Source: RMDB library RFMREP, as collected in RNAgym. Structure probing data (DMS) for a 177-nucleotide construct. For DMS the reverse transcriptase was MarathonRT.

RNA sequence: GGGAACGACUCGAGUAGAGUCGAAAAUGGGAUGCGCAAGGAAGCUGACGAGCGGGAGGCCUUCACGGGCUGCACCGCUGGCCGACCCUGAUCUUCUGUGAAGGGUUCGAGUUGGAGCACGCCUGUCGUGGUAAUAAGGCUUCGGCCUUAUUACCACAAAAGAAACAACAACAACAAC
Reactivity to DMS in 0.01 (KOAc 150mM, MgCl2 10mM, bicine 150mM(pH8.5), 24C), signal-to-noise 1, nucleotides 027 to 126: u010g020g010g000a070u000g010c050g040c060a080a090g070g020a020a070g010c050u000g030a150c050g000a030g020c000g000g000g000a290g000g010c020c020u000u000c300a150c290g000g010g000c000u000g000c050a260c000c010g000c000u030g000g000c160c050g010a020c000c000c000u050g000a140u000c000u010u000c220u010g050u000g020a300a090g010g020g000u010u000c020g030a190g030u000u000g000g000a130g010c010a040c120g020c010c030u000g010u010c150